Structure probing data (DMS and 2A3) for a 177-nucleotide construct. Values cover nucleotides 27 to 126. The 2A3 profile rests on 2,717 reads. Conditions: 150 mM KOAc, 10 mM MgCl2 and 150 mM bicine (pH 8.5), 24 C. High DMS reactivity at an A or C suggests that its Watson-Crick edge is free. Source: RMDB library OK1LIB, as collected in RNAgym.
RNA sequence: GGGAACGACUCGAGUAGAGUCGAAAAGAAGAAAAAGAAAUACGCGAGCCACGGAAAAGCCGGUCACCGUGGAGCGAAAUAAACGGUCAAAGAAGACCGGCCAGGCUGAAGAAAAACUUCAGCCAAAAUAUAUCAUAGUCUUCGGACUAUGAUAUAUAAAAGAAACAACAACAACAAC
Reactivity to DMS in 0.01 (KOAc 150mM, MgCl2 10mM, bicine 150mM(pH8.5), 24C), signal-to-noise 3, nucleotides 027 to 126: g020a100a160g010a040a070a050a080a070g000a060a130a080u020a050c080g000c000g000a060g020c000c000a000c030g000g020a120a070a050a120g010c020c000g000g000u000c010a120c000c000g020u000g020g040a030g000c030g000a060a070a100u030a020a080a300c120g000g000u010c160a070a080a160g000a140a080g000a000c000c000g000g020c010c300a070g000g000c000u000g000a000a010g010a120a150a090a110a070c010u000u000c000a000g010c000c000a000a010a070
Reactivity to 2A3 in 0.01 (KOAc 150mM, MgCl2 10mM, bicine 150mM(pH8.5), 24C), signal-to-noise 3, nucleotides 027 to 126: g060a050a020g080a030a100a030a020a010g110a040a150a020u160a050c010g020c010g030a060g090c000c000a000c000g000g000a050a130a000a020g030c010c010g000g010u010c000a000c020c000g000u000g000g000a010g000c010g070a150a050a020u160a010a100a060c050g040g040u070c060a000a000a130g090a140a010g010a030c000c010g000g000c000c000a020g000g000c010u010g000a000a000g020a010a080a060a100a110c000u000u010c000a000g000c000c000a000a000a000